RNA sequence: GGGAACGACUCGAGUAGAGUCGAAAAAGAGGCGAUACGUCGCCUCAAGCUUGGUGCUUAGCUUCUUUCACCAAGUAUAUUACACGCGGAUAACCGCCAAAGGAGAAACACUGACUACGGUCAGUGAGGAAGUUGGUUCGGUUCGCCGAACCAACAAGAUGCACUAAUAGUUCGCUAUUAGUGCAUCAAAAGAAACAACAACAACAAC
Reactivity to 2A3 in 0.01 (KOAc 150mM, MgCl2 10mM, bicine 150mM(pH8.5), 24C), signal-to-noise 6, nucleotides 027 to 156: a000g010a000g010g000c000g000a000u020a060c230g090u010c010g010c000c000u000c000a000a000g000c000u000u000g000g000u020g010c030u040u030a060g050c000u030u010c000u010u010u010c000a000c000c000a000a000g020u000a070u010a010u140u170a050c050a020c040g020c010g000g030a080u090a300a250c010c000g010c020c020a020a030a000g010g000a010g000a020a090a000c000a000c010u010g010a000c000u040a020c160g080g000u000c000a000g000u020g010a010g030g050a080a110g000u000u000g000g000u010u000c000g000g030u020u040c140g020c050c000g000a000a000c000c000a000a000c000a000a000
Reactivity to DMS in 0.01 (KOAc 150mM, MgCl2 10mM, bicine 150mM(pH8.5), 24C), signal-to-noise 2, nucleotides 027 to 156: a060g000a020g040g020c020g030a070u000a070c240g020u000c010g020c000c000u000c010a020a070g000c020u000u000g000g000u000g000c100u000u000a030g010c050u000u000c010u000u000u000c000a060c010c010a020a030g020u000a100u000a090u000u000a070c050a110c130g020c020g020g040a230u000a100a090c000c000g030c030c080a050a120a100g000g010a060g010a130a150a140c010a040c010u000g000a040c010u010a100c250g080g000u000c010a000g020u010g010a070g050g000a100a150g000u000u010g010g000u000u000c000g030g070u000u010c300g010c010c000g000a020a010c010c010a000a010c020a040a090

This 207-nucleotide RNA was probed chemically with 2A3 and DMS.
2A3 adducts were read by reverse transcription with SuperScript II with manganese.
DMS adducts were read by reverse transcription with MarathonRT.
Source: RMDB library M2RFPK, as collected in RNAgym.
The DMS profile rests on 4,906 reads.